[RMDB]
RNA sequence: GGGAACGACUCGAGUAGAGUCGAAAAGACGCCUGUGUGGCGAAGCGAGCAUGCGAAAGAGCCGCACAGUCCAUCUAAUAUAAAGCGGCCAGAUGGAUUGCUCGCUAAAAGAUCCAUAUCACUGAGAAUAGGAUGCCGUAUUCGUACGGCAUCCUAUAAAAGAAACAACAACAACAAC
Reactivity to 2A3 in 0.01 (KOAc 150mM, MgCl2 10mM, bicine 150mM(pH8.5), 24C), signal-to-noise 1, nucleotides 027 to 126: g060a060c020g100c010c000u100g180u170g040u090g130g000c030g000a000a000g000c000g040a020g000c000a030u050g000c050g140a240a040a000g100a050g030c000c000g040c040a100c000a040g000u000c000c000a050u000c030u070a010a110u070a090u030a170a220a000g010c000g010g010c040c000a010g000a000u020g000g000a000u000u030g000c000u000c000g000c000u000a000a000a000a000g080a070u000c080c000a030u000a010u030c080a110c070u050g040a000g000a240
Reactivity to DMS in 0.01 (KOAc 150mM, MgCl2 10mM, bicine 150mM(pH8.5), 24C), signal-to-noise 1, nucleotides 027 to 126: g000a300c180g000c080c040u090g010u000g070u020g000g000c000g000a040a020g000c000g000a000g040c050a160u020g050c090g000a000a220a150g030a150g000c030c000g000c010a090c300a000g090u000c040c020a030u020c030u000a130a110u000a110u000a080a030a060g000c000g000g030c210c000a080g040a000u000g010g020a120u000u000g030c000u030c010g100c000u000a020a000a050a090g010a110u020c000c000a030u030a060u020c030a100c040u000g000a060g000a090